Source information: Chemical mapping of a 177-nucleotide RNA with 2A3 and DMS. Source: RMDB library M2PK50, as collected in RNAgym. Reactivities are given for positions 27 through 126. For 2A3 the reverse transcriptase was SuperScript II with manganese. For DMS, 1,317 sequencing reads were counted.
RNA sequence: GGGAACGACUCGAGUAGAGUCGAAAAUCUAUUGCGUUCGCGCAAUAGAAAAUAAAAUCAGCGGUAAAUCGAGGCGUAAAAUUACCGCUGAACGCCUCGAUUAAAUCAGAACCUUCGGGUUCUGAAAGUUAAUUGUAGCGUUCGCGCUACAAUUAACAAAAGAAACAACAACAACAAC
Reactivity to 2A3 in 0.01 (KOAc 150mM, MgCl2 10mM, bicine 150mM(pH8.5), 24C), signal-to-noise 1, nucleotides 027 to 126: u000c000u000a000u020u000g000c010g000u030u000c200g000c000g010c070a000a000u000a000g000a000a020a010a000u080a000a060a000a030u080c040a010g040c030g000g150u100a040a050a040u050c030g000a010g030g000c020g020u040a030a130a150a000u130u080a040c000c030g000c020u010g010a000a010c000g000c000c000u000c010g010a010u030u070a060a050a010u030c000a010g000a010a000c000c000u030u110c250g130g000g010u000u000c000u000g030a000a000a000
Reactivity to DMS in 0.01 (KOAc 150mM, MgCl2 10mM, bicine 150mM(pH8.5), 24C), signal-to-noise 2, nucleotides 027 to 126: u000c000u000a000u000u000g020c010g020u000u000c220g020c000g000c010a000a000u000a020g000a030a030a040a150u010a060a040a050a120u000c070a080g010c060g010g010u000a070a040a020u000c030g000a070g010g010c040g010u000a050a030a070a060u010u000a090c040c030g020c050u000g000a060a000c010g000c010c010u000c000g010a070u020u010a040a110a110u000c000a010g000a020a010c000c000u000u010c190g030g010g030u000u000c000u000g000a000a060a080